[RMDB]
RNA sequence: GGGAACGACUCGAGUAGAGUCGAAAAAUAUGCGCUCUGUCGUACGCGCUGAGGCGCUCGAUCGCUGCGCGCUGGUACUGGCCGUACCUACGAUCGCGCAUGAUGGAUCAUACAUACUGGCGCAGGCAGAUUCUGUUCGGUUCGCCGAACAGAAUCUAAAAGAAACAACAACAACAAC
Reactivity to DMS in 0.01 (KOAc 150mM, MgCl2 10mM, bicine 150mM(pH8.5), 24C), signal-to-noise 3, nucleotides 027 to 126: a140u030a070u000g000c010g010c000u010c150u000g010u000c260g000u010a100c280g030c030g030c010u010g010a190g030g040c000g000c030u000c170g020a040u000c030g020c080u000g040c040g000c000g020c250u010g000g000u000a010c020u030g010g000c300c160g000u020a030c010c010u000a030c180g010a140u000c060g020c000g030c000a030u000g010a020u010g010g000a020u000c040a260u000a070c070a080u000a070c070u000g000g010c000g010c000a040g020g010c120
Reactivity to 2A3 in 0.01 (KOAc 150mM, MgCl2 10mM, bicine 150mM(pH8.5), 24C), signal-to-noise 2, nucleotides 027 to 126: a000u290a060u020g040c030g020c010u050c070u090g090u090c030g010u040a100c070g040c000g000c040u010g090a110g160g000c000g000c030u040c080g050a050u010c020g000c060u010g010c000g000c020g020c030u030g000g020u000a050c080u170g200g040c040c010g020u020a010c000c000u030a040c070g120a260u250c000g000c000g000c040a010u110g020a040u070g160g030a000u000c020a000u050a080c030a000u140a020c040u030g000g000c000g020c000a030g120g000c040

Chemical mapping of a 177-nucleotide RNA with DMS and 2A3. The DMS profile rests on 1,900 reads. Values are in units of 0.01, from 0 to 300, in steps of 10. The reactions ran in a buffer of 150 mM KOAc, 10 mM MgCl2 and 150 mM bicine (pH 8.5), at 24 C. The 2A3 profile rests on 2,088 reads. DMS adducts were read by reverse transcription with MarathonRT.